[RMDB]
RNA sequence: GGGAACGACUCGAGUAGAGUCGAAAAACGAGACGCAAUUAUAAAUAGUAAAGAAACAGAUACAGUCGUUACAAAAGCGUUUAGUGGAAAGCUUGCACGCGGUAUCAACAAUAGGUUUAUCGAAGAAACUAGUACUAGGAUUCGUCCUAGUACUAGUAAAAGAAACAACAACAACAAC
Reactivity to DMS in 0.01 (KOAc 150mM, MgCl2 10mM, bicine 150mM(pH8.5), 24C), signal-to-noise 7, nucleotides 027 to 126: a060c050g000a100g000a040c040g010c020a090a130u020u010a130u060a060a070a090u020a130g010u000a040a040a060g010a050a060a060c150a100g020a060u020a040c060a170g000u010c020g010u000u010a030c060a040a050a070a070g020c020g010u010u000u000a160g020u020g000g000a070a060a070g000c040u000u010g010c110a040c080g020c090g010g010u000a020u010c040a080a060c180a060a080u030a060g000g000u000u010u010a120u010c040g010a090a090g010a130a080
Reactivity to 2A3 in 0.01 (KOAc 150mM, MgCl2 10mM, bicine 150mM(pH8.5), 24C), signal-to-noise 8, nucleotides 027 to 126: a000c050g020a040g050a010c030g000c040a060a060u210u110a090u220a120a130a060u210a060g080u130a050a090a050g090a090a110a010c090a040g020a030u030a030c040a020g090u120c020g000u070u060a040c040a050a120a020a040g020c010g020u100u100u130a070g010u070g090g030a120a040a000g010c010u040u050g030c060a010c030g020c030g030g040u050a020u080c020a010a080c030a090a120u130a140g060g060u050u090u070a100u100c070g040a100a030g050a090a160
Chemical mapping of a 177-nucleotide RNA with DMS and 2A3. Conditions: 150 mM KOAc, 10 mM MgCl2 and 150 mM bicine (pH 8.5), 24 C. For 2A3, 7,027 sequencing reads were counted. High DMS reactivity at an A or C suggests that its Watson-Crick edge is free. For DMS the reverse transcriptase was MarathonRT.